[RMDB]
RNA sequence: GGGAACGACUCGAGUAGAGUCGAAAAAGGUAAUUUCUCCUGCACCUUUAUCAAUGGAGGAACUCGACUUUGCUGUGGGUCCCAAAGGGACCUUAGGUGCAGACAGUUACCGGCGGUGAAGUGUGAGCAUAGGUUCGUGUCUUCGGACACGAACCAAGCACAUAAGCCUGUUCGCAGGCUUAUGUGCAAAAGAAACAACAACAACAAC
Reactivity to 2A3 in 0.01 (KOAc 150mM, MgCl2 10mM, bicine 150mM(pH8.5), 24C), signal-to-noise 1, nucleotides 027 to 156: a000g070g000u020a060a000u050u030u020c090u020c000c000u020g020c040a010c000c000u110u140u210a170u210c070a070a040u160g050g000a020g020g070a100a120c050u000c020g040a050c030u020u070u040g030c040u060g020u100g090g010g000u000c000c000c060a100a050a050g000g010g010a000c010c000u050u110a010g000g020u010g020c000a000g000a050c040a010g000u020u040a000c020c000g000g010c020g020g040u060g020a040a050g070u070g020u010g040a060g050c040a090u070a130g000g000u000u000c000g000u000g030u000c000u050u030c280g120g000a000c000a000c010g000a010a010c000c000a000a000